[RMDB]
RNA sequence: GGGAACGACUCGAGUAGAGUCGAAAACAUGUUGAAAAAUGUUUGGAUGAGCUGUGGGUGGGGGUGAAAGGCCAAUCAAACUGAGAGAUAGCUCGUACUCCCCGAAAUGCAUUUAGGUGCAGCGUUGGCAUAACAUGUUCUUCGGAACAUGUUAUGCAAAAGAAACAACAACAACAAC
Reactivity to DMS in 0.01 (KOAc 150mM, MgCl2 10mM, bicine 150mM(pH8.5), 24C), signal-to-noise 1, nucleotides 027 to 126: c020a000u000g010u030u010g010a020a060a050a190a130u000g010u000u000u000g010g020a010u000g030a090g040c000u000g000u000g010g000g020u010g010g000g000g000g010u000g000a040a120a100g020g020c020c040a010a070u000c100a050a080a090c100u010g010a050g000a160g020a080u000a120g000c040u010c040g010u000a130c140u000c020c000c000c090g030a040a020a070u010g000c010a000u000u010u020a060g000g030u000g000c000a000g010c240g030u010u000g000
Structure probing data (DMS) for a 177-nucleotide construct. For DMS, 741 sequencing reads were counted. It was measured as part of the RMDB library RFMREP. The RNA was probed in 150 mM KOAc, 10 mM MgCl2 and 150 mM bicine (pH 8.5) at 24 C. Reactivities are given for positions 27 through 126.